[RMDB]
Structure probing data (DMS) for a 177-nucleotide construct.
The data come from the RNA Mapping Database (RMDB), library TTRINS.

RNA sequence: GGGAACGACUCGAGUAGAGUCGAAAAGAUAUGGAGCUGUAUGCGGCUGAUGACCUUAGCUAAUUAGGCAACUUCGGAAACGAAGUUGCCUAAUUAGCUAAGCAAGGCCUAUACUGGCUCCUAAGUCCAUGUACUCUAACUUCGGUUAGAGUACAUGAAAAGAAACAACAACAACAAC
Reactivity to DMS in 0.01 (KOAc 150mM, MgCl2 10mM, bicine 150mM(pH8.5), 24C), signal-to-noise 4, nucleotides 027 to 126: g010a110u000a300u000g010g010a020g010c010u000g010u000a000u000g010c300g020g010c000u000g010a140u010g020a100c300c000u000u000a010g010c000u000a010a000u000u000a010g010g000c000a010a010c000u000u000c010g010g000a090a100a200c000g000a010a010g030u000u000g000c000c010u000a000a000u000u000a000g000c000u010a000a000g000c020a060a090g000g010c000c000u000a050u000a010c000u010g040g000c000u000c000c000u000a020a080g010u010c030
Values are in units of 0.01, from 0 to 300, in steps of 10.